[RMDB]
RNA sequence: GGGAACGACUCGAGUAGAGUCGAAAAACGGUCGUACGCGACCGAGGCGCGGCUAGGUCGACGGACCGAACAAUGGCAUCCCGCAUGCUGCCAUCCGCCGCGCAGCUUCUUCUCAAACGGUGCGGAAAAAAGUAGGACACCUUCGGGUGUCCUACAAGCUUAAUAAUGCGUUCGCGCAUUAUUAAGCAAAAGAAACAACAACAACAAC
Reactivity to DMS in 0.01 (KOAc 150mM, MgCl2 10mM, bicine 150mM(pH8.5), 24C), signal-to-noise 2, nucleotides 027 to 156: a100c020g020g040u000c010g030u010a090c150g040c050g000a030c010c000g020a050g000g020c030g010c030g020g030c030u010a110g020g020u000c010g020a200c300g020g000a050c000c020g010a190a050c300a120a040u000g000g030c010a070u000c040c010c030g040c100a070u000g000c090u010g000c040c010a050u010c010c040g020c010c000g000c010g040c000a020g000c000u010u000c090u030u000c060u000c040a080a080a040c080g090g000u000g020c000g000g030a000a040a120a110a080a120g020u000a020g010g000a040c010a010c000c010u000u000c270g050g020g030u000g010u010c000c000u000a000c000a020a090
Reactivity to 2A3 in 0.01 (KOAc 150mM, MgCl2 10mM, bicine 150mM(pH8.5), 24C), signal-to-noise 4, nucleotides 027 to 156: a000c010g000g000u020c010g020u050a050c250g010c020g120a000c000c000g000a050g000g010c000g000c010g000g000c000u010a010g000g000u010c020g090a160c200g180g030a000c010c000g000a000a000c010a000a010u010g000g000c000a010u100c040c000c000g000c000a010u090g050c010u010g000c000c000a000u010c010c020g000c000c000g000c010g000c000a000g000c000u130u100c010u070u020c020u020c030a080a080a030c060g030g010u010g000c010g000g000a050a020a010a010a000a050g010u010a000g000g000a000c010a000c010c000u020u080c190g040g000g000u000g000u000c000c000u000a000c000a000a000